RNA sequence: GGGAACGACUCGAGUAGAGUCGAAAAGAUAAAAGAAAACGGCGAUGCUUUUACUCGUGCUCCUUUUAGCUAUCUACAAGGGGCUACAUGAAGCGAAAUGAGCGACAAAAGCGAGUAGUUUUCAAUCCUUUUAGCACUGAUUCGUCAGUGCUAAAAGAAAAGAAACAACAACAACAAC
Reactivity to DMS in 0.01 (KOAc 150mM, MgCl2 10mM, bicine 150mM(pH8.5), 24C), signal-to-noise 4, nucleotides 027 to 126: g020a210u030a070a070a130a100g020a030a010a020a030c000g020g020c060g000a150u030g020c000u010u010u000u020a180c160u010c020g010u020g020c000u010c000c000u000u010u030u000a010g020c270u030a150u050c000u000a030c070a060a020g010g000g000g010c000u010a010c100a050u010g020a100a160g020c170g000a090a060a040u010g010a180g000c030g000a060c170a040a060a040a030g000c000g000a100g000u010a060g000u000u000u010u000c000a030a130u030c080
Reactivity to 2A3 in 0.01 (KOAc 150mM, MgCl2 10mM, bicine 150mM(pH8.5), 24C), signal-to-noise 6, nucleotides 027 to 126: g030a020u140a030a090a020a030g030a000a030a010a000c060g080g010c050g060a070u160g030c040u050u040u010u040a060c040u030c040g040u050g000c000u010c000c000u030u000u020u000a030g020c130u110a050u300c010u020a040c010a030a010g000g020g000g000c000u010a010c000a030u110g070a070a030g060c010g040a030a050a060u150g010a040g020c010g030a040c040a010a050a000a000g020c020g020a030g010u030a030g000u000u010u000u000c010a030a060u050c000
Chemical mapping of a 177-nucleotide RNA with DMS and 2A3. The reactions ran in a buffer of 150 mM KOAc, 10 mM MgCl2 and 150 mM bicine (pH 8.5), at 24 C. Values cover nucleotides 27 to 126.